[RMDB]
RNA sequence: GGGAACGACUCGAGUAGAGUCGAAAAUUAACUGCACGGCUAUUGACUGGUUUCAUGCGUGGCCGCAGGAGGCUCUGGUCUCCGUCAGCAGGAGGUUCAUUGAGGAAACCAAGGGAAUUGAGGUAUGCCGUGUCAGCCUGCGUCACACACACACACAGGUAUGCUAGGGAUUCGUCCCUAGCAUACCAAAAGAAACAACAACAACAAC
Reactivity to 2A3 in 0.01 (KOAc 150mM, MgCl2 10mM, bicine 150mM(pH8.5), 24C), signal-to-noise 2, nucleotides 027 to 156: u030u030a050a100c000u000g000c000a000c000g030g000c040u030a020u060u200g080a080c000u040g010g080u030u040u050c090a080u180g030c020g050u040g010g000c020c020g000c020a040g000g000a010g010g000c010u020c170u300g130g000u000c010u020c020c010g030u080c060a070g040c010a020g020g110a030g010g040u130u200c030a040u130u300g080a050g000g070a050a000a030c010c030a040a090g080g000g050a110a120u150u160g030a040g050g040u050a040u260g000c000c000g000u000g000u010c000a000g050c000c010u000g000c000g020u050c030a010c010a040c030a000c000a000c060a040c030a000c050a100